The record gives the reactivity of an RNA of 207 nucleotides to 2A3. For 2A3, 516 sequencing reads were counted. High 2A3 reactivity points to a flexible backbone, as in loops and unpaired stretches. 2A3 adducts were read by reverse transcription with SuperScript II with manganese. It was measured as part of the RMDB library M2RFPK.
RNA sequence: GGGAACGACUCGAGUAGAGUCGAAAAGAACUUUGGCCGGCUCGGAAUAGAAUCAGGGUGUGCAAACUGCCCACUGGCAGAAAGGAUUAUAGCAAAUGCGUACCCUAUUGCAAUACAGCCCGGCCAACAUAGACUACUCUAUUCGUAGAGUAGUCAACAUGCCACCCAGAUUCGUCUGGGUGGCAUGAAAAGAAACAACAACAACAAC
Reactivity to 2A3 in 0.01 (KOAc 150mM, MgCl2 10mM, bicine 150mM(pH8.5), 24C), signal-to-noise 1, nucleotides 027 to 156: g070a080a010c120u090u030u040g000g010c000c000g000g040c010u070c120g050g030a110a180u120a100g070a010a010u110c080a130g030g000g010u000g000u020g000c000a030a030a030c040u000g000c000c000c070a210c140u200g050g010c010a000g030a050a030a010g080g040a020u130u120a070u300a070g130c070a000a050a040u030g020c000g000u000a000c000c000c000u000a010u030u000g060c090a030a030u010a030c000a030g050c040c030c080g000g000c000c000a000a000c000a000u060a000g000a000c000u000a000c020u000c000u000a040u150u090c190g020u100a020g000a000g010u000a000g000u020c000a000a000